An RNA of 177 nucleotides, treated with DMS and 2A3 and read out base by base. The 2A3 profile rests on 856 reads. DMS adducts were read by reverse transcription with MarathonRT. For 2A3 the reverse transcriptase was SuperScript II with manganese. The reactions ran in a buffer of 150 mM KOAc, 10 mM MgCl2 and 150 mM bicine (pH 8.5), at 24 C.
RNA sequence: GGGAACGACUCGAGUAGAGUCGAAAAUUUACAAAUUGUCUCUAAACACAUGUGAAUCACAGGCCUCAGUUAUCUAAACGAAAUCUGUACUUACUUUCAGAAUGUAAGAGAGUUUUAUCAAUUGAAACUCAAGUAAUGGCUUCGGCCAUUACUUGAGAAAAGAAACAACAACAACAAC
Reactivity to DMS in 0.01 (KOAc 150mM, MgCl2 10mM, bicine 150mM(pH8.5), 24C), signal-to-noise 2, nucleotides 027 to 126: u040u000u010a120c070a040a100a090u020u020g010u020c060u000c000u020a050a070a030c120a120c140a060u030g000u000g000a080a070u010c060a140c120a000g010g020c010c040u000c050a160g030u000u040a090u000c100u000a160a000a100c190g050a000a080a020u020c020u000g000u010a040c040u000u020a020c010u010u000u000c090a070g030a110a080u000g020u000a020a040g000a110g000a050g000u000u000u080u000a090u040c160a060a090u020u000g010a050a130a020
Reactivity to 2A3 in 0.01 (KOAc 150mM, MgCl2 10mM, bicine 150mM(pH8.5), 24C), signal-to-noise 2, nucleotides 027 to 126: u100u050u070a070c090a000a200a000u010u060g010u000c000u040c000u050a040a150a010c020a020c000a060u130g120u070g110a050a070u110c000a020c000a020g120g000c000c000u070c020a000g020u050u100a080u100c080u220a130a050a040c030g070a020a010a000u000c000u000g030u050a030c000u080u020a000c000u020u010u110c030a040g100a300a070u070g040u020a060a070g030a020g000a000g020u020u020u060u060a150u130c050a070a030u040u050g080a040a020a000